[RMDB]
RNA sequence: GGGAACGACUCGAGUAGAGUCGAAAAGCAGCACGUGCAGUUGAAUUCAGCAACCGGAGGGCAGUGGAUGCCGGAUUCGUAUUCCAGUCAGAGCGGGCUGUGAACUUGUACGCGAAAUCCUUAACCGAUACUUCGUUUCAUUCGUGAAACGAAGUAUAAAAGAAACAACAACAACAAC
Reactivity to 2A3 in 0.01 (KOAc 150mM, MgCl2 10mM, bicine 150mM(pH8.5), 24C), signal-to-noise 3, nucleotides 027 to 126: g070c050a010g030c040a020c090g020u030g020c000a030g000u150u140g040a040a060u100u040c020a010g000c020a060a040c010c010g000g050a090g030g130g000c050a010g050u080g130g020a020u030g030c030c000g000g040a050u050u000c030g000u050a140u090u030c030c010a000g040u010c020a000g000a020g210c100g040g020g000c010u010g030u060g080a010a010c030u080u100g050u080a010c020g000c020g030a030a000a060u080c020c030u070u110a030a040c040c050g010
Reactivity to DMS in 0.01 (KOAc 150mM, MgCl2 10mM, bicine 150mM(pH8.5), 24C), signal-to-noise 4, nucleotides 027 to 126: g000c120a080g010c040a070c050g000u000g000c030a040g000u020u010g010a050a080u010u010c050a060g000c040a060a070c040c050g010g010a100g000g010g030c040a050g020u010g010g010a080u000g010c030c050g010g010a070u000u010c050g030u000a130u000u000c030c010a060g010u000c060a090g000a140g000c140g000g010g010c010u000g010u000g000a030a060c110u000u000g000u010a040c060g000c020g000a050a080a100u000c020c030u000u010a070a130c130c110g010
Chemical mapping of a 177-nucleotide RNA with 2A3 and DMS. Reactivities are given for positions 27 through 126.